Background
Chemical mapping of a 207-nucleotide RNA with 2A3 and DMS. Values are in units of 0.01, from 0 to 300, in steps of 10. For DMS the reverse transcriptase was MarathonRT.
RNA sequence: GGGAACGACUCGAGUAGAGUCGAAAACAAAACGUCCUCGUCGUACAGAGUGGUAACAUGUGUCACCACAUAUCCAAGCUUGGGUACACGGGCUUGACCCAACCCCUUGGGCGGAUGGUGGCACAUGAAAAGAAGUAACACUUCGGUGUUACUUCAACCUUGUGCUUUAGUUCGCUAAAGCACAAGGAAAAGAAACAACAACAACAAC
Reactivity to 2A3 in 0.01 (KOAc 150mM, MgCl2 10mM, bicine 150mM(pH8.5), 24C), signal-to-noise 4, nucleotides 027 to 156: c080a020a070a000a040c030g120u100c020c000u030c020g180u060c020g100u160a110c070a090g070a040g050u120g040g060u130a100a030c000a000u000g000u000g000u000c000a000c010c000a100c070a170u200a020u060c000c000a000a010g010c020u010u020g000g010g010u040a020c020a030c030g010g000g020c040u280u300g190a300c000c000c000a000a030c010c010c000c000u000u010g000g010g000c000g000g010a000u020g010g000u000g000g000c000a000c000a000u000g000a000a000a010a010g000a000a000g010u000a000a000c000a000c000u040u070c220g050g000u000g000u000u000a000c000u000u000c000a000a020
Reactivity to DMS in 0.01 (KOAc 150mM, MgCl2 10mM, bicine 150mM(pH8.5), 24C), signal-to-noise 2, nucleotides 027 to 156: c050a050a080a060a080c100g020u000c000c110u010c040g000u000c050g030u020a130c110a070g000a150g000u020g000g000u000a090a140c020a020u000g010u010g010u000c030a060c020c000a050c050a100u000a030u000c000c000a010a170g030c100u010u000g000g010g150u000a030c110a110c100g040g020g010c050u040u000g030a120c000c000c000a070a050c020c000c010c040u010u020g010g010g000c100g010g000a090u000g000g020u000g000g020c030a040c000a000u000g000a020a090a080a100g000a020a000g000u000a010a020c000a030c000u000u010c300g080g030u000g010u000u010a000c000u010u000c000a040a070
Overview: Conditions: 150 mM KOAc, 10 mM MgCl2 and 150 mM bicine (pH 8.5), 24 C.